The record gives the reactivity of an RNA of 207 nucleotides to 2A3 and DMS. The 2A3 profile rests on 2,969 reads.
[RMDB]
RNA sequence: GGGAACGACUCGAGUAGAGUCGAAAAGUACGUCCUCUCAGGCAUAGAGAUGACCAUUUGCCUAGGGUGAGUCUUUAAGUAGACACAGCCUAUCUAUGGUGACGUAUUGGGGCACGGGUUUUAACACCCCCGUGACGGUCGGAGGCUAUUAGCCUUCCCUAUCUCGCUAGUUCGCUAGCGAGAUAGGAAAAGAAACAACAACAACAAC
Reactivity to 2A3 in 0.01 (KOAc 150mM, MgCl2 10mM, bicine 150mM(pH8.5), 24C), signal-to-noise 4, nucleotides 027 to 156: g000u010a000c010g010u000c010c000u000c010u070c220a020g000g000c030a020u080a050g160a020g050a150u130g050a070c060c020a080u070u030u040g010c000c010u020a020g020g000g020u020g010a020g010u010c010u030u210u070a300a300g300u130a040g050a010c020a010c000a040g000c000c000u080a120u170c030u050a040u080g010g010u010g000a000c000g000u010a030u010u060g010g000g010g000c000a000c010g000g020g010u040u120u030u100a090a030c080a050c000c040c000c000c000g000u010g010a080c040g030g010u030c000g010g000a000g000g000c040u080a200u300u200a210g000c000c000u000u000c010
Reactivity to DMS in 0.01 (KOAc 150mM, MgCl2 10mM, bicine 150mM(pH8.5), 24C), signal-to-noise 2, nucleotides 027 to 156: g000u000a040c000g030u000c020c040u000c020u010c170a030g020g100c030a060u000a100g020a250g050a230u000g000a100c050c010a190u000u000u000g030c010c000u010a130g020g030g070u010g010a300g010u000c010u020u010u010a100a300g010u000a020g020a020c030a100c020a240g050c010c020u000a120u010c180u020a150u000g010g020u020g020a050c000g040u000a030u000u000g000g030g020g010c020a060c080g000g010g000u010u000u000u010a180a140c220a130c060c140c000c000c010g030u000g010a150c050g010g020u000c050g030g020a080g030g020c040u000a200u000u000a120g000c020c010u000u000c020
For 2A3 the reverse transcriptase was SuperScript II with manganese.
The RNA was probed in 150 mM KOAc, 10 mM MgCl2 and 150 mM bicine (pH 8.5) at 24 C.